[RMDB]
RNA sequence: GGGAACGACUCGAGUAGAGUCGAAAACAGAAGUUGGGUAAGCCAUGAAUGGGAAAUUUCCUCAUUCUUGGUUACACUAUAGUUCGAAAAGAAUUCCUGGCUUCUUGUUGCACAGCUGACUCAUGCCAAAGACGUAAUACUUCGGUAUUACGUCUUUAAAAGAAACAACAACAACAAC
Reactivity to DMS in 0.01 (KOAc 150mM, MgCl2 10mM, bicine 150mM(pH8.5), 24C), signal-to-noise 9, nucleotides 027 to 126: c050a030g000a010a020g010u000u000g010g010g000u010a130a100g010c000c000a010u000g010a010a000u000g000g000g000a050a240a170u020u030u030c130c000u010c010a010u000u000c000u000u010g010g010u000u000a130c130a080c150u010a090u020a060g020u000u000c010g000a100a070a120a150g000a030a050u010u000c000c000u000g010g000c010u000u000c000u010u010g020u000u000g010c100a060c130a090g010c050u000g000a090c080u010c060a070u010g000c130c140
Reactivity to 2A3 in 0.01 (KOAc 150mM, MgCl2 10mM, bicine 150mM(pH8.5), 24C), signal-to-noise 7, nucleotides 027 to 126: c010a000g010a010a010g010u010u010g020g000g000u050a050a020g010c000c000a010u000g010a000a000u000g000g010g110a080a250a300u180u140u130c030c010u070c010a000u000u000c000u000u010g010g000u000u020a020c020a000c020u070a030u110a240g050u030u020c060g040a070a120a080a080g030a020a040u090u020c000c000u000g020g000c000u010u010c000u000u140g010u010u050g030c070a030c020a060g030c020u050g060a080c040u040c200a050u150g010c030c030
The record gives the reactivity of an RNA of 177 nucleotides to DMS and 2A3. The RNA was probed in 150 mM KOAc, 10 mM MgCl2 and 150 mM bicine (pH 8.5) at 24 C. The data come from the RNA Mapping Database (RMDB), libraries RFM100 and RFMREP. Reactivities are rounded to 0.1 and cut off at 0 and 3. DMS adducts were read by reverse transcription with MarathonRT. 2A3 adducts were read by reverse transcription with SuperScript II with manganese.